[RMDB]
An RNA of 177 nucleotides, treated with 2A3 and DMS and read out base by base. For 2A3 the reverse transcriptase was SuperScript II with manganese. The DMS profile rests on 1,069 reads. The data come from the RNA Mapping Database (RMDB), library M2PK50.
RNA sequence: GGGAACGACUCGAGUAGAGUCGAAAACUAUUUGACUUCGGUCAAAUAGAAAUAGAAACUUGUUAAGGCGCAGUCGCCUAGCGCCACUCAAAAGGGCGAUAAAAACAGAUCUCUUCGGAGAUCUGAAGUGUGUUAUAAACUUCGGUUUAUAACACACAAAAGAAACAACAACAACAAC
Reactivity to 2A3 in 0.01 (KOAc 150mM, MgCl2 10mM, bicine 150mM(pH8.5), 24C), signal-to-noise 2, nucleotides 027 to 126: c000u000a000u000u000u000g000a000c000u020u030c240g030g010u000c000a020a000a000u000a000g020a020a040a000u130a030g140a060a130a050c090u130u240g050u300u300a230a140g000g010c020g000c030a060g130u020c000g000c000c000u010a010g000c000g000c000c020a040c010u050c020a030a050a020a000g020g000g000c000g010a000u080a000a070a010a000a000c000a000g000a000u000c010u000c000u060u120c200g110g000a010g000a000u000c000u000g000a040a010
Reactivity to DMS in 0.01 (KOAc 150mM, MgCl2 10mM, bicine 150mM(pH8.5), 24C), signal-to-noise 1, nucleotides 027 to 126: c000u000a010u000u010u010g000a000c010u000u020c180g030g020u000c000a000a000a000u000a010g000a100a090a070u000a130g000a090a080a150c160u020u000g010u000u010a120a130g000g000c020g000c030a130g030u000c000g000c030c000u000a060g000c000g010c000c000a070c080u010c100a010a010a030a120g010g020g030c030g000a070u000a050a020a070a080a130c030a010g000a000u000c000u000c000u000u000c150g030g020a010g010a010u000c000u000g020a020a060